[RMDB]
RNA sequence: GGGAACGACUCGAGUAGAGUCGAAAACGUCCGUGGUUGCGAUCCGUUGGUGAAGCCCGUUGGCAGACAGGCCUGUGAUCUGCAGCCCUGCCCCACGGAGCCCCCAGGUGAGGCGCGGGGAGGCCGACCUUAAUCAAAUCUUCGGAUUUGAUUAAGGAAAAGAAACAACAACAACAAC
Reactivity to 2A3 in 0.01 (KOAc 150mM, MgCl2 10mM, bicine 150mM(pH8.5), 24C), signal-to-noise 4, nucleotides 027 to 126: c050g090u010c010c020g040u050g030g050u090u140g060c010g010a050u030c040c030g050u060u170g030g050u100g070a100a020g030c010c020c030g140u120u130g070g000c030a020g020a170c060a060g010g070c020c020u060g030u050g060a240u030c070u170g000c000a020g010c000c000c000u010g000c000c000c010c010a010c000g020g020a080g050c020c010c010c000c000a020g050g040u050g040a080g010g020c040g010c010g020g010g010g010a030g030g000c000c010g030a060
Reactivity to DMS in 0.01 (KOAc 150mM, MgCl2 10mM, bicine 150mM(pH8.5), 24C), signal-to-noise 7, nucleotides 027 to 126: c150g010u000c030c030g040u010g010g020u000u000g010c040g000a070u000c050c050g010u010u010g010g020u000g010a150a150g010c010c020c090g010u010u010g020g020c100a070g000a080c210a080g000g000c080c020u000g020u010g010a110u010c060u000g020c020a070g000c080c020c030u000g000c020c030c010c020a030c020g000g000a140g000c040c010c010c010c030a150g010g010u000g010a090g010g000c080g020c070g000g000g000g000a080g010g010c030c020g010a190

An RNA of 177 nucleotides, treated with 2A3 and DMS and read out base by base. Reactivities are given for positions 27 through 126. 2A3 adducts were read by reverse transcription with SuperScript II with manganese. The DMS profile rests on 13,480 reads. Reactivities are rounded to 0.1 and cut off at 0 and 3. It was measured as part of the RMDB library OK2TRN.